[RMDB]
RNA sequence: GGGAACGACUCGAGUAGAGUCGAAAACAACCCGGGUCAGGAGUUUGGCACGGCACUGCACCAGCGGCACCGGAUCUUGGGCCGGGCGGGUGAGGGCGGAUGAGUUGGCCAAGCAUAGAAAAGGCCCUUGUCGCAGGGCUCCGCGCCGACCUUGGGGUACGGUACAAUUUUUCGAAAUUGUACCGUAAAAAGAAACAACAACAACAAC
Reactivity to 2A3 in 0.01 (KOAc 150mM, MgCl2 10mM, bicine 150mM(pH8.5), 24C), signal-to-noise 3, nucleotides 027 to 156: c030a020a090c010c010c010g020g020g020u070c100a140g000g050a110g050u050u090u050g030g000c050a040c040g060g000c030a040c070u080g020c060a070c040c010a030g030c040g040g020c100a160c130c000g050g020a070u100c060u160u190g090g150g000c040c000g000g030g000c110g070g070g020u110g050a140g010g030g000c050g000g050a190u080g040a080g050u240u220g020g000c000c020a010a000g000c030a070u110a130g100a020a130a010a020g020g000c010c000c000u000u040g160u030c050g000c060a010g000g000g000c000u030c060c020g050c050g010c030c020g000a020c000c000u060u290g010g000g000g000
Reactivity to DMS in 0.01 (KOAc 150mM, MgCl2 10mM, bicine 150mM(pH8.5), 24C), signal-to-noise 1, nucleotides 027 to 156: c000a060a120c000c000c000g000g010g030u000c000a040g020g000a070g030u000u000u020g030g020c040a130c020g020g020c060a040c000u000g020c000a040c040c010a070g010c040g010g010c010a100c020c000g000g000a080u010c090u000u010g030g030g020c010c010g000g020g000c040g000g000g030u010g010a040g020g000g000c040g040g000a130u000g000a100g020u010u030g020g010c020c010a020a060g020c060a160u000a110g000a070a060a100a130g000g030c000c020c000u000u000g020u000c230g020c090a120g000g030g070c020u010c030c070g010c040g000c020c010g020a030c000c010u010u010g030g010g010g020
An RNA of 207 nucleotides, treated with 2A3 and DMS and read out base by base. The RNA was probed in 150 mM KOAc, 10 mM MgCl2 and 150 mM bicine (pH 8.5) at 24 C. As a SHAPE reagent, 2A3 marks flexible, mostly unpaired nucleotides at the ribose 2'-OH. For 2A3 the reverse transcriptase was SuperScript II with manganese.